[RMDB]
RNA sequence: GGGAACGACUCGAGUAGAGUCGAAAAGGGCGUCAUUUCGAUGACGCCCAUACGUCUACUCCGAUUGGCGAGGACGACGCCGACGGGCGGGUUUGCCAAUCGCACCGUCCAGAUUCGUCUGGACGAAGACCUGUCUGGAAUUCGUUCCAGACAGGUCAAAAGAAACAACAACAACAAC
Reactivity to 2A3 in 0.01 (KOAc 150mM, MgCl2 10mM, bicine 150mM(pH8.5), 24C), signal-to-noise 2, nucleotides 027 to 126: g020g010g010c010g000u000c010a020u060u100u200c260g060a000u030g000a000c000g000c010c000c000a000u010a000c000g030u000c010u010a020c000u000c020c010g000a000u010u000g000g030c040g020a070g060g070a090c050g050a100c010g020c010c000g220a300c190g100g030g000c010g020g060g000u000u010u120g000c000c000a010a010u020c020g000c020a030c020c020g000u000c000c000a000g000a030u020u080c130g050u010c090u000g000g010a000c010g000a030a020
Reactivity to DMS in 0.01 (KOAc 150mM, MgCl2 10mM, bicine 150mM(pH8.5), 24C), signal-to-noise 2, nucleotides 027 to 126: g000g010g010c000g020u000c000a040u000u000u030c170g000a010u000g010a000c000g040c000c000c030a000u000a010c190g000u000c010u000a050c000u000c030c000g020a030u000u000g000g010c000g020a060g010g030a040c050g010a200c010g020c010c020g020a120c300g000g030g020c000g020g020g000u000u000u010g000c020c020a010a010u010c000g010c150a110c080c000g010u000c020c020a010g020a020u000u000c210g030u000c010u000g000g010a010c000g000a070a070
The data come from the RNA Mapping Database (RMDB), library M2PK50. Structure probing data (2A3 and DMS) for a 177-nucleotide construct. For 2A3 the reverse transcriptase was SuperScript II with manganese. Values cover nucleotides 27 to 126. The DMS profile rests on 1,276 reads.